[RMDB]
RNA sequence: GGGAACGACUCGAGUAGAGUCGAAAAUAUCUCAAAAGGAGGCCAGCUUGGUCAGCUGGUUAAGGAGAAUAAUACCCCCCGGCUACCCGUUCUUCUCGGAAUGUUUGAAUAUAAAGGCCGCGUUACACUACACGUCUUGAUUCGUCAAGACGUGUAGAAAAGAAACAACAACAACAAC
Reactivity to DMS in 0.01 (KOAc 150mM, MgCl2 10mM, bicine 150mM(pH8.5), 24C), signal-to-noise 1, nucleotides 027 to 126: u030a050u000c020u000c000a110a070a160a140g040g020a210g000g010c000c000a020g010c030u000u020g010g010u000c270a110g010c010u000g010g000u000u000a100a080g010g000a020g000a030a010u000a110a100u020a300c050c070c020c030c030c000g000g000c060u000a100c100c020c040g000u000u000c010u000u000c030u010c120g010g050a040a090u010g010u000u010u010g000a080a030u000a080u020a120a100a180g010g010c010c010g050c100g010u000u000a130c110a160